[RMDB]
RNA sequence: GGGAACGACUCGAGUAGAGUCGAAAAAGCGUAUGAAGUACGUAGAGUGUCGGCAAGCUCUAUAUAUGGACACUUACGAAGGGUUUUGGUUGUUUUGUAUCUCAAGCCGACUUUGAGUAUUUGAGGAAAAAGACUUACGCCUUCGGGCGUAAGUCAAGCCUUACAUACUCUUCGGAGUAUGUAAGGCAAAAGAAACAACAACAACAAC
Reactivity to 2A3 in 0.01 (KOAc 150mM, MgCl2 10mM, bicine 150mM(pH8.5), 24C), signal-to-noise 1, nucleotides 027 to 156: a000g020c020g040u070a010u120g190a170a080g020u070a070c000g000u000a060g000a040g120u020g010u020c070g050g040c010a050a110g010c010u010c090u000a090u060a050u010a050u190g130g010a050c040a020c090u050u130a040c000g050a070a020g060g000g000u000u000u110u200g010g010u010u000g020u040u010u010u070g030u040a060u030c010u000c010a020a020g000c030c000g010a040c000u080u090u070g010a020g010u010a030u050u100u070g040a060g020g080a090a000a000a000a000g000a000c000u010u000a000c020g010c000c000u040u040c140g030g000g020c010g010u010a000a000g000u010c000a000a000